[RMDB]
RNA sequence: GGGAACGACUCGAGUAGAGUCGAAAACGCGAUUCGUCGCGGGUUUAGCGUACUACGAUGGUAGCGAAGAACGACGCUACCCACCAUGGAUCCCAAAUAGGAUCCAUGAGGCGUCGGGAGCUACGCAUCGUAUCGCAGAGUACCACUUCGGUGGUAAUCUGUGCUAACCUUUCGAGGUUAGCACAGAAAAAGAAACAACAACAACAAC
Reactivity to 2A3 in 0.01 (KOAc 150mM, MgCl2 10mM, bicine 150mM(pH8.5), 24C), signal-to-noise 2, nucleotides 027 to 156: c000g000c000g010a010u000u070c300g050u010c010g120c010g040g000g000u140u080u160a090g020c000g040u090a120c140u010a000c030g020a030u010g000g010u000a040g020c030g070a190a040g020a100a000c000g000a010c020g000c000u050a110c000c060c020a040c000c000a000u000g010g000a000u040c010c040c030a150a270a020u200a050g000g000a000u000c000c000a010u010g000a000g000g000c000g000u000c010g000g000g000a010g000c010u030a030c150g000c190a000u010c080g000u000a030u160c000g000c000a000g000a030g060u030a000c000c000a010c030u120u150c270g080g000u020g000g000u000a020a040
Reactivity to DMS in 0.01 (KOAc 150mM, MgCl2 10mM, bicine 150mM(pH8.5), 24C), signal-to-noise 1, nucleotides 027 to 156: c010g030c010g000a040u000u010c300g060u000c010g030c020g000g000g020u000u000u000a050g000c020g000u000a070c140u000a050c030g020a030u000g050g010u000a000g030c060g000a060a210g010a060a250c010g000a050c000g000c000u000a030c000c010c010a300c300c000a030u010g030g000a000u000c000c010c010a050a100a170u020a090g020g010a010u000c000c000a000u000g000a060g000g040c000g040u010c000g010g000g000a300g000c000u010a010c020g010c020a010u010c000g000u010a000u000c030g000c030a070g000a210g000u000a010c010c010a010c040u000u010c290g100g000u000g040g000u010a000a030
Chemical mapping of a 207-nucleotide RNA with 2A3 and DMS. For DMS the reverse transcriptase was MarathonRT.